RNA sequence: GGGAACGACUCGAGUAGAGUCGAAAAGAUAUGGACGACCUCAGACAUGUCGUCACAGUCGGAAACGACUGAAGUCGACAACAGCUGACAUGGUCGUCCUAAGUCAAAAGGCUACUUCGGUAGCCAACGAUACUGGCUAGUUCGCUAGCCAGUAUCGAAAAGAAACAACAACAACAAC
Reactivity to 2A3 in 0.01 (KOAc 150mM, MgCl2 10mM, bicine 150mM(pH8.5), 24C), signal-to-noise 4, nucleotides 027 to 126: g010a030u060a030u130g010g000a000c010g000a000c000c010u020c000a000g040a120c090a210u270g010u020c000g020u000c000a010c000a030g000u000c010g000g010a070a050a020c020g020a010c010u020g070a180a000g060u030c010g000a000c010a300a070c050a130g060c010u020g010a050c090a300u220g000g000u000c000g000u000c000c000u010a000a000g000u000c020a020a060a060a100g000g010c000u010a000c010u060u100c300g160g010u000a000g000c050c000a010a000
Reactivity to DMS in 0.01 (KOAc 150mM, MgCl2 10mM, bicine 150mM(pH8.5), 24C), signal-to-noise 4, nucleotides 027 to 126: g010a050u000a300u000g010g000a030c020g020a020c000c020u010c000a020g030a040c130a300u000g020u010c010g000u000c000a170c000a010g000u000c020g010g010a110a130a160c010g010a010c000u000g020a070a100g020u000c020g000a020c010a090a070c300a150g000c000u000g010a090c300a110u010g010g000u000c010g000u000c000c000u010a010a090g000u010c090a060a070a110a100g010g020c020u000a000c010u010u000c180g040g020u000a000g020c000c010a010a000